[RMDB]
RNA sequence: GGGAACGACUCGAGUAGAGUCGAAAAGUGUCCUCUGACGCGCAAGAUUGAAGACAAGGUGCCAAAGCACUACGUUGCACAAAUUCAACUCUUGAUGGAGAUUCUCGAUUUGCCCGAAUGUGAUUUCAUUCAGUUCAGGCCUGCUGAAGGUGACGUCGCGAGAAAUAAUUUUCGAAUUAUUUCUCGCAAAAGAAACAACAACAACAAC
Reactivity to 2A3 in 0.01 (KOAc 150mM, MgCl2 10mM, bicine 150mM(pH8.5), 24C), signal-to-noise 4, nucleotides 027 to 156: g090u090g020u020c010c020u020c080u100g030a020c020g020c000g000c030a010a020g010a070u030u060g030a060a010g070a050c050a100a080g080g000u010g020c030c080a190a110a040g030c020a030c070u160a020c110g070u040u070g000c060a020c000a090a080a050u030u020c010a040a030c080u010c000u040u050g030a060u110g080g000a050g010a060u140u040c040u020c060g090a100u060u040u190g020c000c030c010g020a040a050u130g030u050g090a090u050u210u200c030a020u070u000c000a030g030u020u030c010a010g000g040c010c040u060g000c010u040g050a080a030g030g040u030g020a030c020g040u110c100
Reactivity to DMS in 0.01 (KOAc 150mM, MgCl2 10mM, bicine 150mM(pH8.5), 24C), signal-to-noise 2, nucleotides 027 to 156: g040u000g020u000c020c060u000c050u000g020a080c070g070c070g000c050a060a080g020a130u000u000g000a090a080g010a120c040a080a270g000g000u020g080c020c070a090a100a190g010c000a050c030u000a060c210g010u000u010g000c050a110c190a050a070a140u000u000c010a070a050c050u000c020u010u010g010a140u000g040g010a070g000a120u000u010c020u000c020g000a210u000u010u000g040c000c040c020g010a040a020u000g010u000g030a050u020u000u010c060a110u010u000c020a100g000u000u010c000a040g010g030c020c010u010g060c010u000g010a050a100g030g010u000g020a140c080g000u000c120

An RNA of 207 nucleotides, treated with 2A3 and DMS and read out base by base.
The reactions ran in a buffer of 150 mM KOAc, 10 mM MgCl2 and 150 mM bicine (pH 8.5), at 24 C.
2A3 adducts were read by reverse transcription with SuperScript II with manganese.